[RMDB]
RNA sequence: GGGAACGACUCGAGUAGAGUCGAAAAUGCUGGGUUGGCUGGGAUUAUGUUAAAUCCAAAGAUCAAGUUGGAAAAAAACUGACAUCUUAAUGAUAUUGAAGCUUCCUGUCCAUAAGUUUGAGAUAUCAAAGUAUCUCCCAUUCGUGGGAGAUACUUUAAAAGAAACAACAACAACAAC
Reactivity to DMS in 0.01 (KOAc 150mM, MgCl2 10mM, bicine 150mM(pH8.5), 24C), signal-to-noise 2, nucleotides 027 to 126: u020g000c040u000g020g000g010u000u000g020g000c070u000g000g010g000a090u000u010a050u010g020u000u000a060a130a070u000c050c040a050a040a090g000a080u000c100a120a040g000u010u000g010g020a000a000a060a120a050a040a040c030u000g010a090c200a050u010c020u010u000a070a070u010g000a030u000a020u010u000g020a100a100g000c050u000u000c050c050u000g000u000c030c060a080u000a040a050g010u000u000u000g000a200g000a050u010a030u000c080